[RMDB]
RNA sequence: GGGAACGACUCGAGUAGAGUCGAAAAGAAAGAAAGAAAGCGGUUGGGUGGGUCCAUCGACCGUCGUGGCGUAUUCGGACGCUUUACCACGACGCGAGGAAGUAGCGAGACCGACCACCCCCUUUAACAGAGGUAUAGUAGUUCGCUACUAUACCAAGACGACUAAAGAGUUCGCUCUUUAGUCGUCAAAAGAAACAACAACAACAAC
Reactivity to 2A3 in 0.01 (KOAc 150mM, MgCl2 10mM, bicine 150mM(pH8.5), 24C), signal-to-noise 1, nucleotides 027 to 156: g080a010a070a050g070a070a090a010g060a080a110a000g150c290g090g120u270u110g040g000g040u020g000g000g000u000c000c010a040u140c020g000a020c030c070g000u000c000g000u000g030g020c110g020u190a070u060u080c020g010g050a010c000g070c000u020u010u060a020c000c000a000c000g000a000c000g000c000g010a000g000g030a020a050g020u060a000g000c010g000a020g000a080c020c000g000a010c010c000a000c020c000c000c000c030u000u110u070a160a100c130a050g080a060g180g010u000a000u000a000g010u000a000g010u030u050c090g000c040u000a000c010u000a000u010a000c000c010a000a000